[RMDB]
RNA sequence: GGGAACGACUCGAGUAGAGUCGAAAAUCGCGUAUCUUCGGAUACGCGAAAAGAGCUAGCAAAGGUUCCAAGCUAGCAAAAGAAUAAGAAAAGGAACCAAAAAAAGCGCGGAGUUCGCUCCGCGCAACAUAAUUAUGCACUUCGGUGCAUAAUUAUGAAAAGAAACAACAACAACAAC
Reactivity to DMS in 0.01 (KOAc 150mM, MgCl2 10mM, bicine 150mM(pH8.5), 24C), signal-to-noise 1, nucleotides 027 to 126: u000c000g050c000g000u010a000u000c000u000u000c160g000g000a000u020a020c000g020c000g010a000a010a080a120g000a200g030c000u000a000g010c010a070a080a150g030g000u010u000c000c000a040a120g010c000u000a000g000c000a000a050a050a100g010a110a150u010a050a080g000a010a030a250a090g000g000a000a000c000c000a000a000a030a090a120a170a170g000c010g000c010g000g010a010g050u000u020c300g010c030u000c000c000g020c010g000c000a000a040